[RMDB]
RNA sequence: GGGAACGACUCGAGUAGAGUCGAAAAAGACUUGUAUUCGUACAAGUCUACAGAAAUUUCGGUAGCACACGAUCACACCUAGCGUUCUCAAUAACGAUCGAACAACGUGUCAAUUCGUUGACACGAAAGAAUGUCCAUAGUUCGCUAUGGACAUUCUAAAAGAAACAACAACAACAAC
Reactivity to DMS in 0.01 (KOAc 150mM, MgCl2 10mM, bicine 150mM(pH8.5), 24C), signal-to-noise 3, nucleotides 027 to 126: a030g010a010c000u000u000g010u000a010u000u010c160g020u000a000c010a010a010g000u000c000u000a060c170a110g000a070a080a110u000u010u000c020g010g020u010a010g010c080a050c090a070c050g000a030u000c040a070c170a120c140c030u000a050g020c040g000u000u000c020u000c030a070a080u020a060a080c200g000a060u000c050g020a130a060c230a080a140c010g020u020g020u010c000a000a030u000u000c200g010u000u000g000a010c010a010c000g000a060a060
Reactivity to 2A3 in 0.01 (KOAc 150mM, MgCl2 10mM, bicine 150mM(pH8.5), 24C), signal-to-noise 4, nucleotides 027 to 126: a000g010a000c010u010u000g000u010a030u030u050c210g020u040a000c000a010a000g000u000c000u010a010c030a030g210a050a130a060u080u100u050c040g000g020u030a010g010c070a030c020a020c110g020a030u030c010a020c010a010c030c030u030a020g010c010g050u020u000c020u000c000a010a120u170a090a060c090g030a050u050c040g040a090a050c040a060a010c010g010u020g000u020c000a010a020u020u060c140g060u070u010g000a010c000a000c010g010a010a030
Chemical mapping of a 177-nucleotide RNA with DMS and 2A3. It was measured as part of the RMDB library M2PK50. The DMS profile rests on 2,611 reads.